[RMDB]
RNA sequence: GGGAACGACUCGAGUAGAGUCGAAAAACUAAAUAAAAGAGGAACGGGAAUACGCAUAACGGGAUACAUAUCCAUGAUAUAUCUGGAUAUGUCAUUGGCUAUAUAAUACAUAGAUCGUGCAUCUGUUAUGUACUUAUUAAUUAUAUCAUAUAAUGGAUCGAAUACUGACAUUCGUGUCAGUAUUCGAAAAAGAAACAACAACAACAAC
Reactivity to 2A3 in 0.01 (KOAc 150mM, MgCl2 10mM, bicine 150mM(pH8.5), 24C), signal-to-noise 1, nucleotides 027 to 156: a000c010u010a020a000a150u100a130a120a160a000g130a120g050g000a030a030c030g110g000g040a030a060u060a050c030g020c070a000u010a000a040c000g000g030g020a040u000a040c000a000u000a000u000c000c000a070u070g130a030u080a090u190a150u140c020u020g000g000a000u000a010u000g000u000c000a050u040u040g030g000c000u010a000u010a000u010a010a130u160a070c100a000u020a010g120a270u130c000g000u010g080c030a050u070c010u060g000u050u080a030u030g000u040a000c010u050u000a070u170u070a070a020u020u060a060u120a020u300c010a010u090a000u100a300a090u170g090g000a000